[RMDB]
RNA sequence: GGGAACGACUCGAGUAGAGUCGAAAAGCCGAUGAAUUGCCGAGAAGCCUGGCUCGAAAUCGUCGACGCAUCGACGACGGUCCUGCCAUGAGACCGUAACGAGGACACGUCGCCUCGAAUGGCGUCGUAUAACAUGAGUGGUUCGCCACUCAUGUAACGAUCUAGCCUGAUUCGUCAGGCUAGAUCGAAAAGAAACAACAACAACAAC
Reactivity to 2A3 in 0.01 (KOAc 150mM, MgCl2 10mM, bicine 150mM(pH8.5), 24C), signal-to-noise 2, nucleotides 027 to 156: g080c030c040g030a040u180g080a000a190u110u100g010c020c010g060a050g080a130a030g040c080c140u180g040g000c050u000c070g050a040a080a060u010c020g020u000c000g010a000c030g000c080a050u000c000g000a030c000g000a020c000g010g000u010c010c000u060g120c060c000a140u070g050a050g000a170c010c000g020u080a050a000c060g000a010g000g010a070c070a020c280g080u150c060g000c010c010u020c020g040a040a010u040g060g010c000g030u040c000g010u020a090u020a110a010c010a010u010g000a000g000u010g010g010u100u020c110g010c070c000a000c000u000c010a030u000g000u000a020a000
Source: RMDB library M2RFPK, as collected in RNAgym.
The record gives the reactivity of an RNA of 207 nucleotides to 2A3.
Values are in units of 0.01, from 0 to 300, in steps of 10.